Structure probing data (2A3 and DMS) for a 177-nucleotide construct. The reactions ran in a buffer of 150 mM KOAc, 10 mM MgCl2 and 150 mM bicine (pH 8.5), at 24 C.
RNA sequence: GGGAACGACUCGAGUAGAGUCGAAAACGGACCGUAAACCCCUGAACGGAGGGGCGUCAGCAGUAGCUAGUGGCAUCAGUUACUGCUGUAAACCCGUAGAGUUCAGGAGAUUGGGGUCGGUGGCGGCCAUCAUAUGCAACUUCGGUUGCAUAUGAUGAAAAGAAACAACAACAACAAC
Reactivity to 2A3 in 0.01 (KOAc 150mM, MgCl2 10mM, bicine 150mM(pH8.5), 24C), signal-to-noise 2, nucleotides 027 to 126: c000g060g010a010c010c000g040u030a090a060a040c010c020c010c010u020g020a010a000c020g020g150a030g010g000g010g050c020g030u030c000a000g010c010a000g000u000a000g000c020u050a040g030u060g270g000c060a090u050c000a130g000u010u010a000c010u010g000c000u000g000u000a020a030a010c000c000c010g020u070a080g050a010g060u000u000c000a010g030g020a030g000a000u060u150g040g030g040g020u030c060g020g020u050g020g000c070g040g000c030
Reactivity to DMS in 0.01 (KOAc 150mM, MgCl2 10mM, bicine 150mM(pH8.5), 24C), signal-to-noise 3, nucleotides 027 to 126: c070g010g010a070c030c000g010u000a050a090a060c020c020c000c000u000g000a020a010c020g000g000a280g010g010g010g000c060g000u010c010a000g000c000a000g010u000a000g000c010u010a060g000u000g010g020c170a110u010c080a020g010u010u000a000c000u000g010c010u000g000u000a030a090a050c000c000c000g010u010a200g000a170g010u000u000c000a010g010g000a020g000a100u000u010g000g000g000g000u000c000g020g030u010g010g010c070g000g000c080